[RMDB]
RNA sequence: GGGAACGACUCGAGUAGAGUCGAAAAAUUUACAAUUCCAUGUGCUCAAAAGAGGGAAAGCUUCCAACGAAGGAAGAAUUCUUGGAAAAAGUUGAAUAUUUGAAUCCUCAGCUUUUGGGGACAGCAACAGACUAUAGAUUUUCGAAUCUAUAGUCUGAAAAGAAACAACAACAACAAC
Reactivity to 2A3 in 0.01 (KOAc 150mM, MgCl2 10mM, bicine 150mM(pH8.5), 24C), signal-to-noise 1, nucleotides 027 to 126: a010u130u090u110a000c060a050a100u100u000c040c020a050u080g010u000g020c020u030c020a030a070a050a000g050a130g000g010g010a010a000a000g060c000u010u000c010c000a170a150c180g130a040a010g010g000a030a030g000a030a040u080u070c000u020u040g050g060a120a000a030a070a030g060u160u200g060a170a040u060a170u220u260u240g070a060a050u020c010c000u050c130a050g020c040u120u070u100u030g000g040g040g020a000c030a050g000c000a010a100
Reactivity to DMS in 0.01 (KOAc 150mM, MgCl2 10mM, bicine 150mM(pH8.5), 24C), signal-to-noise 3, nucleotides 027 to 126: a100u010u000u010a110c150a150a280u000u000c000c030a130u000g010u000g000c010u000c010a000a040a030a060g000a120g000g000g000a000a040a080g000c070u000u000c000c010a070a080c300g030a120a070g020g020a050a090g000a070a050u010u000c000u000u010g010g000a040a050a110a090a060g000u000u010g020a050a070u010a090u000u010u000g000a160a130u020c060c010u020c080a120g000c060u000u000u010u000g010g000g000g000a010c030a050g030c130a080a140